[RMDB]
Overview
Source: RMDB library OK2TST, as collected in RNAgym. Structure probing data (2A3 and DMS) for a 177-nucleotide construct.

RNA sequence: GGGAACGACUCGAGUAGAGUCGAAAAACUUUGCCACAGUUAUGAUAGUUGAUUAUGUAUGUAGUUGUAACAGGCAAUCAUUUCCGCUCGUGCGACGUACAGAGCGAUGCAAUUGCAUUAUUUAGUCAACUUAUUUAGGCUUCGGCCUAAAUAAGUUAAAAGAAACAACAACAACAAC
Reactivity to 2A3 in 0.01 (KOAc 150mM, MgCl2 10mM, bicine 150mM(pH8.5), 24C), signal-to-noise 3, nucleotides 027 to 126: a020c000u040u030u050g000c000c010a070c050a070g020u050u040a060u090g060a070u040a070g110u080u080g070a140u030u130a070u180g140u020a050u080g120u050a050g030u030u010g000u000a040a050c030a060g080g020c060a020a000u070c030a100u120u000u000c040c000g000c010u010c020g020u020g050c140g110a130c040g060u060a040c000a090g010a000g000c020g020a010u010g030c000a010a300u130u070g000c000a020u010u040a060u070u150u050a030g010u040c000
Reactivity to DMS in 0.01 (KOAc 150mM, MgCl2 10mM, bicine 150mM(pH8.5), 24C), signal-to-noise 5, nucleotides 027 to 126: a060c060u010u000u000g020c010c000a140c270a110g020u000u010a070u000g000a090u000a070g010u000u010g000a070u000u020a060u010g010u010a030u010g010u010a040g010u000u010g000u000a040a070c150a090g000g010c070a050a050u020c130a120u000u000u010c080c020g040c020u000c010g020u000g000c050g000a100c180g020u000a030c050a120g010a020g010c010g010a130u000g000c010a150a060u000u000g000c010a020u000u000a060u010u010u000a050g000u000c040

Conditions: 150 mM KOAc, 10 mM MgCl2 and 150 mM bicine (pH 8.5), 24 C.
The 2A3 profile rests on 1,748 reads.